[RMDB]
RNA sequence: GGGAACGACUCGAGUAGAGUCGAAAAUAGAACUGCCUAGUUCACUAUAGGUAGAGUCAGUUAGGAGACUCUGUGCCUAAGAGAAGCCUAUUCUCCUGUACUAGGCAGUAUAGGGCCAGGAAUAGGCUAUCCUAACUGAGGUGAACUGUCAUGAUGGGCUAAUGAUUAUGUUCGCAUAAUCAUUAGCAAAAGAAACAACAACAACAAC
Reactivity to DMS in 0.01 (KOAc 150mM, MgCl2 10mM, bicine 150mM(pH8.5), 24C), signal-to-noise 4, nucleotides 027 to 156: u000a070g000a080a210c030u010g000c030c010u000a030g010u000u010c070a110c120u000a140u000a040g010g000u000a050g000a130g020u010c000a020g030u000u000a050g010g010a110g010a200c010u000c030u000g010u010g000c070c080u010a110a080g010a070g020a250a150g020c030c010u000a030u000u000c010u000c010c020u000g040u000a030c010u000a180g020g020c210a080g000u000a000u010a030g010g020g010c050c100a140g000g000a030a040u000a020g020g020c020u000a050u000c000c000u010a020a040c010u000g020a070g000g020u010g000a040a090c070u010g010u000c040a100u000g010a180u000g000g000
Reactivity to 2A3 in 0.01 (KOAc 150mM, MgCl2 10mM, bicine 150mM(pH8.5), 24C), signal-to-noise 6, nucleotides 027 to 156: u180a020g110a110a060c040u080g010c000c010u020a010g010u040u050c030a020c030u070a040u090a230g050g050u070a050g020a020g200u020c000a000g000u000u000a010g010g020a050g040a070c010u000c010u010g050u080g040c020c040u060a040a010g010a000g020a090a010g000c000c000u010a000u020u000c190u070c010c000u010g010u010a010c010u020a060g290g100c090a000g000u000a000u010a000g000g010g080c130c120a060g010g000a000a000u000a010g000g010c010u010a040u000c000c000u000a000a010c000u000g000a010g010g020u010g000a010a020c020u030g070u130c070a070u130g110a080u110g090g080

The data come from the RNA Mapping Database (RMDB), library OK3TST. The record gives the reactivity of an RNA of 207 nucleotides to DMS and 2A3. The 2A3 profile rests on 6,723 reads. The reactions ran in a buffer of 150 mM KOAc, 10 mM MgCl2 and 150 mM bicine (pH 8.5), at 24 C.